Chemical mapping of a 207-nucleotide RNA with 2A3.
RNA sequence: GGGAACGACUCGAGUAGAGUCGAAAAAUCAGUCUUCGUUCUGUAAACGGGGUUGGAUCCGACUCUCAUAGGCUCUCCAACCCAACUCCUACUCAAUACGUCCUCGUCGUACAGAACGGUAACAUGUAAAACGAAGGCUGCUUCGGCAGCCUUCGAAGUAAGUAUCUCCGUUCGCGGAGAUACUUACAAAAGAAACAACAACAACAAC
Reactivity to 2A3 in 0.01 (KOAc 150mM, MgCl2 10mM, bicine 150mM(pH8.5), 24C), signal-to-noise 1, nucleotides 027 to 156: a000u130c050a040g100u000c090u020u030c000g000u000u020c000u020g040u080a000a110a170c000g010g010g010g010u040u000g060g000a080u230c000c000g160a140c040u190c050u030c130a190u120a140g000g000c000u000c000u000c020c000a000a000c000c000c000a000a000c020u000c000c000u070a100c010u010c110a130a030u070a160c000g100u130c030c070u100c030g090u080c000g050u000a000c010a000g000a000a000c020g000g000u070a040a010c010a060u150g050u280a010a000a060a120c030g010a020a000g000g000c050u030g000c000u010u040c070g090g000c030a020g000c030c030u000u000c000g000a010a000

Reactivities are given for positions 27 through 156. Source: RMDB library M2RFPK, as collected in RNAgym. The reactions ran in a buffer of 150 mM KOAc, 10 mM MgCl2 and 150 mM bicine (pH 8.5), at 24 C. The 2A3 profile rests on 450 reads.